[RMDB]
Chemical mapping of a 177-nucleotide RNA with 2A3 and DMS.
The DMS profile rests on 5,195 reads.
The data come from the RNA Mapping Database (RMDB), library OK2TST.
Reactivities are given for positions 27 through 126.
RNA sequence: GGGAACGACUCGAGUAGAGUCGAAAAUUCUAAAGGAUCGUAUCUGGAAGGAUAAGAAUGUUACGGAUGAAAACAUUCAAAGUUCCAGUGAUAGAAACAUCAUGGGUUUGAGGGUAAACUCGUAACAAACAGUAGCAGAAUUCGUUCUGCUACUGUUAAAAGAAACAACAACAACAAC
Reactivity to 2A3 in 0.01 (KOAc 150mM, MgCl2 10mM, bicine 150mM(pH8.5), 24C), signal-to-noise 3, nucleotides 027 to 126: u010u000c020u030a050a020a060g040g020a020u050c070g030u210a040u010c030u010g020g040a030a020g030g040a010u020a090a030g070a050a120u080g000u000u030a010c050g050g030a050u110g100a100a060a000a060c000a020u020u040c020a020a040a020g090u130u020c000c000a010g030u020g010a010u010a070g200a020a110a020c030a030u080c010a020u060g030g060g010u020u030u070g060a050g010g060g050u090a020a020a040c020u060c040g010u060a040a040c030a030
Reactivity to DMS in 0.01 (KOAc 150mM, MgCl2 10mM, bicine 150mM(pH8.5), 24C), signal-to-noise 6, nucleotides 027 to 126: u020u000c040u010a090a180a170g010g000a100u000c130g010u010a300u010c000u000g010g020a300a070g010g010a040u000a090a140g010a050a070u000g010u010u000a090c050g020g010a060u020g000a070a090a040a020c010a020u000u000c000a020a070a100g000u010u000c010c000a020g030u000g000a050u010a040g010a110a060a160c100a050u000c050a050u000g000g010g010u000u000u000g000a060g010g010g010u010a050a040a130c040u000c040g000u000a040a040c120a050

The reactions ran in a buffer of 150 mM KOAc, 10 mM MgCl2 and 150 mM bicine (pH 8.5), at 24 C.